Structure probing data (DMS) for a 177-nucleotide construct. The reactions ran in a buffer of 150 mM KOAc, 10 mM MgCl2 and 150 mM bicine (pH 8.5), at 24 C. It was measured as part of the RMDB library RFMREP.
RNA sequence: GGGAACGACUCGAGUAGAGUCGAAAAAGCUGCCCAGAGUGGCGCAAGCCACAUAUCCCGUGACAUUGCGAAAGCAAGGCUGGCGGUAGGUAGUCCUGGGCGGCGACAGCCUUGGACUGCGGCGUAACUGAUUUGAAAACUUCGGUUUUCAAAUCAGAAAAGAAACAACAACAACAAC
Reactivity to DMS in 0.01 (KOAc 150mM, MgCl2 10mM, bicine 150mM(pH8.5), 24C), signal-to-noise 1, nucleotides 027 to 126: a100g000c010u000g000c070c000c000a080g000a240g010u000g010g010c000g000c290a050a110g000c000c000a020c000a190u010a080u000c070c000c030g010u000g010a030c030a120u010u000g000c010g000a180a090a250g000c020a000a010g010g030c080u010g010g010c030g020g000u000a050g030g020u000a070g010u000c080c000u000g000g000g000c010g010g010c050g030a060c150a100g000c000c020u020u050g000g000a080c040u020g000c000g030g010c080g000u020a120a160